[RMDB]
Annotation:
The record gives the reactivity of an RNA of 177 nucleotides to 2A3 and DMS. For 2A3, 1,557 sequencing reads were counted. 2A3 is a SHAPE reagent: it acylates the 2'-hydroxyl of flexible nucleotides of all four kinds. DMS adducts were read by reverse transcription with MarathonRT. The RNA was probed in 150 mM KOAc, 10 mM MgCl2 and 150 mM bicine (pH 8.5) at 24 C. It was measured as part of the RMDB library OK2TRN.

RNA sequence: GGGAACGACUCGAGUAGAGUCGAAAAGGUGAAGACUUCGAUAUUCGUCUGGUCGAAUAUCUGGUUGCCGAGUUCAAGAAGGAAAGUGGCAUCGACCUGAAGAACGACAAGCUUGCCCUGCAGCGCAGCGAGCUGAAAAUUUCGAUUUUCAGCUCGCAAAAGAAACAACAACAACAAC
Reactivity to 2A3 in 0.01 (KOAc 150mM, MgCl2 10mM, bicine 150mM(pH8.5), 24C), signal-to-noise 2, nucleotides 027 to 126: g000g010u100g070a110a050g030a080c020u040u040c140g020a020u000a030u110u020c000g050u060c190u160g090g080u100c020g000a020a000u030a000u010c070u050g000g070u040u060g010c010c000g010a010g020u050u070c080a070a030g050a050a040g220g030a070a100a030g070u110g040g000c030a080u020c020g010a070c010c050u010g020a040a030g020a070a000c030g070a010c050a030a020g010c020u030u020g050c010c010c020u030g000c020a070g000c030g000c060a040
Reactivity to DMS in 0.01 (KOAc 150mM, MgCl2 10mM, bicine 150mM(pH8.5), 24C), signal-to-noise 3, nucleotides 027 to 126: g000g020u000g000a110a120g000a040c030u010u000c300g010a060u000a020u000u000c000g030u000c120u010g000g000u000c000g000a020a020u000a010u000c020u000g010g010u010u000g000c030c030g000a140g010u000u010c070a060a120g020a100a060g000g000a050a050a110g020u000g000g000c050a050u000c040g000a050c020c020u000g000a090a090g000a040a010c030g010a140c240a010a070g010c080u000u000g000c050c020c040u000g000c110a060g000c110g030c190a150